RNA sequence: GGGAACGACUCGAGUAGAGUCGAAAAGUGCCGGCAAUACAGUGUGUAUGGAGGUCUCAAUGGCUCGGAAGUGCCAGCAAACCGGCGUAGAUAUUAGCAGACGUAUGGGUGUAAGACUUUUAUUGAAAAAAGUACAUAAGCUUCGGCUUAUGUACAAGUUGGAAUUAGAGUUCGCUCUAAUUCCAACAAAAGAAACAACAACAACAAC
Reactivity to DMS in 0.01 (KOAc 150mM, MgCl2 10mM, bicine 150mM(pH8.5), 24C), signal-to-noise 1, nucleotides 027 to 156: g020u000g000c020c020g040g010c050a100a090u000a060c030a180g010u000g060u000g000u000a120u000g000g030a080g040g000u000c020u010c000a110a160u000g000g020c000u000c050g040g020a150a110g000u000g020c000c010a110g020c060a040a150a070c030c040g000g000c040g040u000a060g030a100u000a070u000u000a090g020c020a090g000a050c030g010u000a080u000g050g010g000u000g010u000a040a100g000a060c040u000u000u000u000a180u000u020g000a000a060a100a100a060a220g000u000a000c010a020u000a000a010g030c000u000u000c300g050g030c000u000u000a000u000g010u000a000c000a000a030
Reactivity to 2A3 in 0.01 (KOAc 150mM, MgCl2 10mM, bicine 150mM(pH8.5), 24C), signal-to-noise 3, nucleotides 027 to 156: g050u030g040c020c000g030g000c040a010a090u060a040c010a040g070u030g010u010g010u230a050u050g060g020a020g050g030u000c040u000c060a070a130u060g000g000c000u010c080g060g020a100a020g030u020g050c000c010a030g030c020a040a040a070c040c020g030g000c020g030u040a040g010a040u070a050u180u180a050g040c040a010g020a100c030g070u090a070u060g000g010g040u040g020u090a120a040g020a020c010u030u040u110u200a130u070u120g010a110a030a030a090a010a020g000u000a000c000a000u010a000a000g000c000u020u060c130g060g000c000u000u040a000u010g000u000a000c010a000a000
This 207-nucleotide RNA was probed chemically with DMS and 2A3. For DMS the reverse transcriptase was MarathonRT. Values cover nucleotides 27 to 156. 2A3 adducts were read by reverse transcription with SuperScript II with manganese.